[RMDB]
RNA sequence: GGGAACGACUCGAGUAGAGUCGAAAACUGCAUCACCUGAUCACUGAUGGCUCAACGGUAUCCGGCGGUACAACUGAAUACUUGUAGCUGCCUAUUGAGCGGGUUGGCUGCAAUCCGAAACGGAGAGAAAACCUAAUUACGUUCGCGUAAUUAGGAACUUACUAGCGGCGUUCGCGCCGCUAGUAAGAAAAGAAACAACAACAACAAC
Reactivity to 2A3 in 0.01 (KOAc 150mM, MgCl2 10mM, bicine 150mM(pH8.5), 24C), signal-to-noise 1, nucleotides 027 to 156: c030u040g020c010a070u010c030a010c010c010u030g010a040u020c050a000c030u050g020a020u070g030g020c020u030c030a010a060c080g120g000u040a080u040c030c030g040g020c040g030g120u110a070c060a160a010c080u150g070a110a120u100a180c030u030u010g000u020a010g030c010u030g000c000c000u030a060u070u080g050a020g030c140g020g000g000u200u120g010g000c000u000g000c010a020a060u000c000c010g030a090a090a120c040g010g000a080g000a000g060a030a070a000a010c000c000u000a000a000u000u000a000c010g050u030u030c240g000c010g090u010a000a000u000u000a010g000g000a000a000
An RNA of 207 nucleotides, treated with 2A3 and read out base by base. Values cover nucleotides 27 to 156. The 2A3 profile rests on 837 reads. The data come from the RNA Mapping Database (RMDB), library M2RFPK. The reactions ran in a buffer of 150 mM KOAc, 10 mM MgCl2 and 150 mM bicine (pH 8.5), at 24 C.